This 177-nucleotide RNA was probed chemically with DMS and 2A3.
For 2A3, 4,834 sequencing reads were counted.
Source: RMDB library OK2TRN, as collected in RNAgym.

RNA sequence: GGGAACGACUCGAGUAGAGUCGAAAAGCCUUUCUCUAUAGAACCAGCUAUUGGAACUCUUAAUGUGGGAGAGUCCAUGCAACUGGAAGUGGAGUUUGAGCCACAGAGUGUGGGCGAUCACAGUGGACAUACAGUCAAGGUUCGCCUUGACUGUAUGAAAAGAAACAACAACAACAAC
Reactivity to DMS in 0.01 (KOAc 150mM, MgCl2 10mM, bicine 150mM(pH8.5), 24C), signal-to-noise 7, nucleotides 027 to 126: g020c010c010u000u010u000c010u000c010u000a150u010a140g010a180a160c020c000a010g000c020u000a130u000u000g010g000a060a070c010u000c000u000u000a110a100u020g020u020g010g000g010a010g000a060g010u000c010c010a010u000g000c190a090a100c010u000g000g010a080a130g020u000g010g010a050g010u000u010u010g010a170g010c000c020a010c030a080g000a090g020u000g020u010g000g010g010c060g010a080u000c070a040c080a090g010u000g010g000a300
Reactivity to 2A3 in 0.01 (KOAc 150mM, MgCl2 10mM, bicine 150mM(pH8.5), 24C), signal-to-noise 4, nucleotides 027 to 126: g000c010c000u030u250u000c040u000c000u050a140u010a210g100a200a110c010c000a000g020c020u060a100u090u040g060g030a170a110c010u020c000u070u130a300a160u300g070u220g170g130g010a030g010a030g020u000c000c000a000u010g010c020a040a030c010u020g000g020a080a020g010u020g000g040a060g000u030u160u220g070a030g030c000c010a010c020a010g090a030g030u090g040u090g030g030g000c040g030a050u120c050a030c020a070g090u080g060g030a020